[RMDB]
RNA sequence: GGGAACGACUCGAGUAGAGUCGAAAACGUAGUCUACCUUCGGGUAGACUACGGAGCAUGUCGAGAGACAUGCCAGUCUAUCGCGUCGCCCGCCCCUGGUGACGGCCUGCGAGGGUACCAGCCUCCUUCGUUGAUAGACAUGGGGCACGGCUGGAAAGGAGUAAUAAAUAUUCGUAUUUAUUACUCCAAAAGAAACAACAACAACAAC
Reactivity to DMS in 0.01 (KOAc 150mM, MgCl2 10mM, bicine 150mM(pH8.5), 24C), signal-to-noise 2, nucleotides 027 to 156: c010g040u000a000g000u000c010u000a030c010c010u020u000c300g070g000g030u000a000g020a020c000u000a010c000g020g010a060g040c010a010u000g010u000c000g010a300g010a300g000a030c010a010u000g000c000c030a090g030u010c010u000a030u000c030g010c030g010u000c020g000c020c020c030g040c030c030c030c090u000g050g020u010g020a040c040g000g020c030c030u010g000c010g020a050g000g000g000u010a070c040c000a080g010c000c020u000c020c010u000u000c020g030u000u000g020a130u000a060g010a030c040a090u000g010g000g050g010c120a070c050g000g030c010u010g010g010a150a110a230
Reactivity to 2A3 in 0.01 (KOAc 150mM, MgCl2 10mM, bicine 150mM(pH8.5), 24C), signal-to-noise 3, nucleotides 027 to 156: c000g000u000a000g000u000c000u010a010c010c010u030u100c300g040g000g000u000a010g000a000c000u000a000c000g000g000a000g000c000a010u000g000u000c010g010a010g000a000g000a110c000a010u000g000c010c000a010g020u010c010u010a020u010c020g000c000g030u000c000g000c000c010c000g120c030c030c010c030u030g010g000u030g030a030c030g010g040c030c040u080g020c010g000a010g000g010g000u060a210c000c000a000g000c020c000u050c010c000u020u010c010g050u050u130g030a060u040a030g030a010c080a120u090g010g000g080g020c070a040c040g000g000c000u010g010g000a010a040a000